[RMDB]
RNA sequence: GGGAACGACUCGAGUAGAGUCGAAAAAGGCACGACAGCGUGCGUAGCAGACAGGAUUAGAUACCCUGGUAGUGCACGCCAUAAGCGGUGGGCCAUAGGUGUGGGUUCCUACCACGGGGUCUGUGCCAAUAUUUAUGAUAUUCGUAUCAUAAAUAUUAAAAGAAACAACAACAACAAC
Reactivity to 2A3 in 0.01 (KOAc 150mM, MgCl2 10mM, bicine 150mM(pH8.5), 24C), signal-to-noise 9, nucleotides 027 to 126: a010g010g010c000a000c000g020a010c010a030g080c040g040u040g000c020g010u020a010g020c020a000g030a060c010a010g030g010a030u070u130a060g060a110u200a140c010c000c000u010g020g090u110a060g080u020g040c000a000c000g000c000c010a120u090a170a040g010c020g040g000u030g020g020g040c000c020a040u090a110g250g050u250g040u050g140g040g000u120u280c000c000u010a010c000c010a010c030g070g000g010g000u000c040u140g000u000g000c000c000
Reactivity to DMS in 0.01 (KOAc 150mM, MgCl2 10mM, bicine 150mM(pH8.5), 24C), signal-to-noise 9, nucleotides 027 to 126: a090g010g010c010a010c010g000a020c010a080g010c050g010u010g010c040g010u000a060g010c060a090g000a100c020a020g000g000a050u010u010a140g000a170u060a120c130c000c000u000g000g010u030a090g010u010g000c000a020c000g000c010c040a150u030a120a110g010c070g010g010u010g000g000g000c020c010a050u010a100g020g010u050g010u010g000g000g000u020u040c030c000u000a020c010c010a030c020g010g000g010g000u000c000u040g040u000g000c000c000